The data come from the RNA Mapping Database (RMDB), library M2RFPK. The record gives the reactivity of an RNA of 207 nucleotides to 2A3. Conditions: 150 mM KOAc, 10 mM MgCl2 and 150 mM bicine (pH 8.5), 24 C. 2A3 adducts were read by reverse transcription with SuperScript II with manganese. Values cover nucleotides 27 to 156.
RNA sequence: GGGAACGACUCGAGUAGAGUCGAAAAGUUCAUCCCCUGAUCAAGGAUGCCCGAAACGGUGAGGCGGAGAGCAAAUUAAAUAACGUCAACCCAUCGGGACGGUUGGCCAGUUAAGAAGUGAGGAUUCAAAAGAUCGAACCGUUCGCGGUUCGAUCAAUCGUAUGUGGUGGUUCGCCACCACAUACGAAAAAGAAACAACAACAACAAC
Reactivity to 2A3 in 0.01 (KOAc 150mM, MgCl2 10mM, bicine 150mM(pH8.5), 24C), signal-to-noise 2, nucleotides 027 to 156: g010u020u080c020a030u030c040c020c030c020u040g030a060u010c010a000a040g080g000a090u060g000c000c020c000g000a040a080a000c020g000g060u050g010a150g010g000c030g070g040a150g010a010g060c110a000a100a110u060u100a010a020a130u140a060a070c060g010u000c010a010a000c020c010c010a030u060c070g010g000g010a010c000g050g000u040u030g020g000c000c030a030g020u110u210a080a070g070a110a000g070u050g050a120g080g030a020u110u020c060a090a090a040a040g000a000u000c030g000a000a000c000c000g020u040u020c200g040c000g040g000u000u000c000g000a000u020c000a000a000